RNA sequence: GGGAACGACUCGAGUAGAGUCGAAAAAGGGCAGGGUGAAAUUCCCGAUCGGCGGUAAACUCCGCGAGCCGAACGAAAAAGGUUUGGCAGGAACCGGUGAGAUUCCGGUACCGACAGUAUAGUCUGGAUGACCACUUCAGCUUCGGCUGAAGUGGAAGAAUAUACGUGUGUUCGCACACGUAUAUUCAAAAGAAACAACAACAACAAC
Reactivity to DMS in 0.01 (KOAc 150mM, MgCl2 10mM, bicine 150mM(pH8.5), 24C), signal-to-noise 3, nucleotides 027 to 156: a160g010g020g040c040a120g050g030g010u010g010a060a150a190u000u000c010c010c000g000a100u000c020g010g010c040g020g010u000a070a140a090c070u000c010c020g030c010g010a110g010c000c010g000a030a300c030g000a060a060a100a210a160g030g000u000u000u000g000g050c020a100g030g030a100a050c000c000g020g030u000g010a290g000a300u010u000c000c010g000g000u000a050c020c000g010a050c010a000g010u000a130u000a090g000u010c030u010g000g020a210u000g010a270c010c000a020c000u000u000c010a010g000c010u010u010c300g050g020c020u010g000a010a010g050u010g000g010a010a020
Reactivity to 2A3 in 0.01 (KOAc 150mM, MgCl2 10mM, bicine 150mM(pH8.5), 24C), signal-to-noise 2, nucleotides 027 to 156: a010g070g040g000c080a020g030g020g000u000g010a040a010a030u040u000c020c010c000g010a030u040c030g050g000c020g000g040u050a070a090a030c050u030c010c000g000c020g000a020g000c010c010g020a010a010c010g100a080a000a060a070a130g090g000u000u000u000g010g000c020a020g040g040a030a020c000c000g010g010u010g000a010g000a000u050u000c000c000g000g010u010a050c000c000g020a020c000a000g060u060a020u070a070g040u020c040u060g070g010a100u170g080a030c000c000a000c000u010u000c010a010g010c000u030u150c210g140g000c000u000g010a000a010g000u000g000g000a000a010
Source: RMDB library M2RFPK, as collected in RNAgym.
This 207-nucleotide RNA was probed chemically with DMS and 2A3.
The DMS profile rests on 4,027 reads.
The reactions ran in a buffer of 150 mM KOAc, 10 mM MgCl2 and 150 mM bicine (pH 8.5), at 24 C.
For 2A3, 2,509 sequencing reads were counted.